[RMDB]
RNA sequence: GGGAACGACUCGAGUAGAGUCGAAAAGAGAUACCCUAUAAGAGUUUCUCUGAUAGUGGUUGCAUUCUUCCAUCUGAGUGCACUAUGUUUAGGGAUGCAGAGGGCCGUAUGACACCAUACUGCCAUGAAAGCGGGUUGUUCGCAACCCGCAAAAGAAACAACAACAACAAC
Reactivity to DMS in 0.01 (KOAc 150mM, MgCl2 10mM, bicine 150mM(pH8.5), 24C), signal-to-noise 2, nucleotides 027 to 129: g040a100g010a100u000a000c000c000c000u000a120u000a080a040g050a150g010u000u020u000c020u000c000u010g020a070u070a100g190u040g010g010u000u070g040c000a000u000u000c000u030u030c190c150a090u060c090u000g000a000g030u060g000c040a000c060u010a030u060g020u010u050u040a030g010g010g040a000u000g080c040a000g000a160g000g000g050c080c150g000u000a010u020g010a040c260a110c240c000a030u010a100c000u040g040c010c010a010u040g030a050a080a010
Reactivity to 2A3 in 0.01 (KOAc 150mM, MgCl2 10mM, bicine 150mM(pH8.5), 24C), signal-to-noise 2, nucleotides 027 to 129: g080a060g010a040u130a070c000c000c020u000a080u140a130a050g060a000g010u000u060u120c000u030c000u030g020a000u100a100g020u030g000g060u170u060g000c010a000u000u000c020u180u060c190c040a200u030c080u150g020a010g000u000g000c040a000c000u000a000u100g100u000u010u000a050g030g000g020a000u070g000c050a000g050a150g180g010g000c000c040g000u000a000u030g010a060c030a030c160c000a000u000a010c020u000g010c020c020a060u130g090a010a030a030
Notes: This 170-nucleotide RNA was probed chemically with DMS and 2A3. Reactivities are given for positions 27 through 129. For 2A3 the reverse transcriptase was SuperScript II with manganese. For DMS the reverse transcriptase was MarathonRT. It was measured as part of the RMDB library 15KLIB. The DMS profile rests on 5,470 reads.